Notes: The data come from the RNA Mapping Database (RMDB), library OK3TST. The record gives the reactivity of an RNA of 207 nucleotides to 2A3 and DMS. For 2A3, 656 sequencing reads were counted. The RNA was probed in 150 mM KOAc, 10 mM MgCl2 and 150 mM bicine (pH 8.5) at 24 C.

RNA sequence: GGGAACGACUCGAGUAGAGUCGAAAAUGUUGAUUAAUCAGAUGUUUUUUACCAGUAAUGAACAGCAUAUGUUUCAAUUUGUUGAUUAUGUGAAACAUCAAUCUAAAGUGGUAGAAUUAAAGUUAAAUUCCAAUUUUUUGGAUUGGGAGACUAGACAAAAACCAUGGUUAUUCGUAACCAUGGUUUUAAAAGAAACAACAACAACAAC
Reactivity to 2A3 in 0.01 (KOAc 150mM, MgCl2 10mM, bicine 150mM(pH8.5), 24C), signal-to-noise 2, nucleotides 027 to 156: u110g000u020u020g030a100u100u220a150a050u100c050a150g110a220u060g140u010u010u030u040u040u000a020c040c030a050g020u180a090a080u150g020a040a060c010a060g020c060a040u040a010u300g030u000u000u030c030a020a070u100u110u160g150u080u110g050a160u060u160a050u240g050u010g010a000a040a000c020a000u000c010a000a060u020c000u080a040a090a070g090u010g040g010u000a000g020a030a090u100u130a160a070a010g010u030u020a040a040a060u010u020c000c000a000a010u040u020u020u070u170u300g200g010a000u000u030g000g010g000a040g010a070c090u030a110g030a090c010a000
Reactivity to DMS in 0.01 (KOAc 150mM, MgCl2 10mM, bicine 150mM(pH8.5), 24C), signal-to-noise 2, nucleotides 027 to 156: u000g020u000u000g000a190u010u010a060a120u000c060a130g000a100u010g000u000u000u000u000u000u000a050c020c030a130g030u010a070a090u010g000a070a110c050a100g030c110a070u000a030u000g010u000u010u000c040a050a090u000u000u010g030u000u010g000a140u000u010a060u010g030u000g000a030a020a060c030a040u000c050a030a070u010c060u000a060a090a120g020u000g020g030u010a050g000a030a060u000u000a040a030a160g000u010u000a010a020a170u010u000c010c010a020a010u010u000u010u000u050u010g000g010a040u010u000g000g010g040a030g030a090c060u000a150g030a100c060a080